[RMDB]
RNA sequence: GGGAACGACUCGAGUAGAGUCGAAAAUCUGUUUACAAGUUAUCGUUAAGUCCGUGUCUGACUACGAUUCCGUAAACAGAAGCCAGUUUGCGUCAAGUCCGACACGGACUCUUGGCAGAACUGAUCAAGUACGCCUAGUCUUCGGACUAGGCGUACUAAAAGAAACAACAACAACAAC
Reactivity to DMS in 0.01 (KOAc 150mM, MgCl2 10mM, bicine 150mM(pH8.5), 24C), signal-to-noise 1, nucleotides 027 to 126: u000c010u000g020u000u000u010a130c040a030a110g010u010u000a110u040c230g010u000u030a070a040g040u000c010c030g010u000g040u000c030u040g040a000c000u000a210c210g000a040u000u000c260c030g010u000a000a000a000c010a030g010a020a050g040c180c090a050g010u020u000u000g020c000g000u000c080a130a010g030u000c010c080g000a030c100a020c100g000g000a000c010u000c000u000u000g020g010c000a160g000a000a030c060u020g000a110u000c200a170

The record gives the reactivity of an RNA of 177 nucleotides to DMS. Reactivities are rounded to 0.1 and cut off at 0 and 3. The DMS profile rests on 697 reads. Values cover nucleotides 27 to 126. The reactions ran in a buffer of 150 mM KOAc, 10 mM MgCl2 and 150 mM bicine (pH 8.5), at 24 C.